[RMDB]
RNA sequence: GGGAACGACUCGAGUAGAGUCGAAAAUCUUCGAACAGGGGUCUUACUCUUGAUGGAUUGCUAUUUAAUUUUAUUACCGACCUGUUCGCAGCGGGUAAGGAUUAAAUAUUGCUAAAUUUAUUAAGAGCAAUUAUUAUAACUUCGGUUAUAAUAAUUGAAAAGAAACAACAACAACAAC
Reactivity to DMS in 0.01 (KOAc 150mM, MgCl2 10mM, bicine 150mM(pH8.5), 24C), signal-to-noise 2, nucleotides 027 to 126: u020c000u020u000c050g020a020a110c100a080g010g010g000g020u030c020u010u010a250c010u000c010u000u000g000a010u000g000g000a010u010u000g020c020u000a020u000u000u000a010a000u000u000u030u060a110u030u000a020c020c030g010a220c200c000u000g000u020u020c120g020c050a040g030c260g000g000g000u010a000a040g000g010a010u010u000a000a040a010u000a010u030u020g000c010u010a030a040a070u000u000u000a000u010u000a020a020g000a000g010
Reactivity to 2A3 in 0.01 (KOAc 150mM, MgCl2 10mM, bicine 150mM(pH8.5), 24C), signal-to-noise 3, nucleotides 027 to 126: u010c010u090u120c040g030a120a050c020a090g010g000g000g050u010c030u090u130a030c000u010c000u000u000g000a010u000g000g020a010u020u060g000c010u010a010u010u040u010a010a010u020u010u030u120a140u040u030a010c000c010g110a120c080c010u030g040u060u130c230g010c050a000g030c080g040g020g000u010a010a010g020g000a000u000u020a000a010a000u060a040u050u070g000c010u110a200a010a010u020u060u030a000u000u020a000a010g000a000g000